[RMDB]
An RNA of 177 nucleotides, treated with 2A3 and DMS and read out base by base.
It was measured as part of the RMDB library M2PK50.
RNA sequence: GGGAACGACUCGAGUAGAGUCGAAAAACCAUCCUAUUCGUAGGAUGGUGCACCAUUGCCGAUUGUAUAUAAUACCGCAGGCGGAAAAGGGGUUCAAAUAAGGAACUUGUCAGUUCGCUGACAAGAACGUUUGAAUAUUAUUCGUAAUAUUCAAACGAAAAGAAACAACAACAACAAC
Reactivity to 2A3 in 0.01 (KOAc 150mM, MgCl2 10mM, bicine 150mM(pH8.5), 24C), signal-to-noise 9, nucleotides 027 to 126: a000c000c000a000u010c000c000u020a030u030u080c240g070u050a000g000g000a000u000g000g000u010g000c010a040c030c010a080u050u190g020c010c010g070a060u090u030g090u030a050u010a020u020a220a240u060a060c010c020g000c050a030g000g000c000g000g020a060a070a020a000g040g010g000g000u060u150c070a080a070a030u170a140a110g130g010a070a090c000u010u000g000u010c000a000g000u020u100c210g000c080u000g000a000c000a000a000g020a020a010
Reactivity to DMS in 0.01 (KOAc 150mM, MgCl2 10mM, bicine 150mM(pH8.5), 24C), signal-to-noise 9, nucleotides 027 to 126: a030c000c000a000u000c000c000u000a020u000u010c170g020u000a010g000g000a010u000g000g010u000g000c140a170c020c010a120u010u000g020c020c020g000a160u010u000g010u000a040u000a100u010a110a080u000a040c030c110g010c060a160g010g010c020g000g000a020a020a050a060g000g000g000g010u010u000c100a040a060a090u010a090a100g010g010a090a120c000u000u000g000u000c000a010g010u000u010c220g020c010u000g000a010c000a010a010g000a060a120